[RMDB]
RNA sequence: GGGAACGACUCGAGUAGAGUCGAAAAUGGAACCUGCUCUCCUGCUUGCUGGUCCCUGACGCAGAGACCGUUGCCUCCCCCACAGCCGUUUGACUGAAGGCUGCUCUGGAGACCUAGAGUAAAACGGCAUUAACCCCUCAUUCGUGAGGGGUUAAUGAAAAGAAACAACAACAACAAC
Reactivity to DMS in 0.01 (KOAc 150mM, MgCl2 10mM, bicine 150mM(pH8.5), 24C), signal-to-noise 9, nucleotides 027 to 126: u010g010g010a090a120c040c010u000g020c040u000c020u000c030c030u010g000c040u010u010g010c050u010g010g010u010c020c020c010u000g010a130c120g020c050a070g000a100g000a130c050c010g000u010u010g010c020c020u010c020c010c020c010c040a110c220a120g010c000c000g010u000u000u000g010a060c040u000g010a180a070g010g010c040u010g000c040u010c080u010g010g010a090g000a110c020c000u000a100g010a050g010u000a020a010a020a040c020g010g020
Reactivity to 2A3 in 0.01 (KOAc 150mM, MgCl2 10mM, bicine 150mM(pH8.5), 24C), signal-to-noise 6, nucleotides 027 to 126: u120g020g010a030a040c000c000u020g010c010u010c000u010c010c020u030g030c030u060u070g030c040u070g010g040u030c000c010c020u030g030a040c050g010c050a010g020a020g020a130c010c020g060u050u060g080c000c010u020c000c000c000c000c000a050c030a020g020c000c000g020u020u040u070g100a040c040u050g040a050a030g050g000c010u030g020c020u030c050u080g100g030a080g030a080c030c020u060a060g000a000g100u020a000a040a010a000c000g010g010